[RMDB]
RNA sequence: GGGAACGACUCGAGUAGAGUCGAAAAGCUGGCCAACAAUAUAUCGCAGCUCAGCAAGGAGAGCAAUUUGGACAUAUCGCGCGAAGACAUCAUGCUGUGCAAGAAGCUAGCGAAGAAUAACGACAUCCUAACGCUCCUUGUUCGCAAGGAGCGUUAGAAAAGAAACAACAACAACAAC
Reactivity to DMS in 0.01 (KOAc 150mM, MgCl2 10mM, bicine 150mM(pH8.5), 24C), signal-to-noise 1, nucleotides 027 to 126: g010c050u000g000g030c000c070a090a110c130a130a080u020a130u000a040u000c040g060c060a200g020c030u000c090a060g020c020a060a110g010g000a200g000a120g000c060a110a090u000u000u000g010g020a090c070a160u080a050u000c030g000c010g000c060g020a120a030g000a020c110a090u000c040a070u000g060c040u000g000u000g020c060a140a060g000a130a150g000c000u000a000g050c000g010a100a090g020a030a120u020a030a070c060g020a080c300a070u000c110
Reactivity to 2A3 in 0.01 (KOAc 150mM, MgCl2 10mM, bicine 150mM(pH8.5), 24C), signal-to-noise 1, nucleotides 027 to 126: g000c010u010g010g020c020c010a000a100c010a160a120u160a010u000a010u150c050g030c060a030g040c010u010c010a000g000c020a040a180g030g010a080g000a000g030c020a050a090u130u120u160g070g040a030c030a150u190a000u180c030g030c000g010c010g190a040a000g150a080c020a070u000c010a010u080g050c040u000g030u030g010c010a000a040g010a100a020g030c020u020a000g000c030g040a060a040g000a070a080u110a080a010c050g090a050c010a080u130c010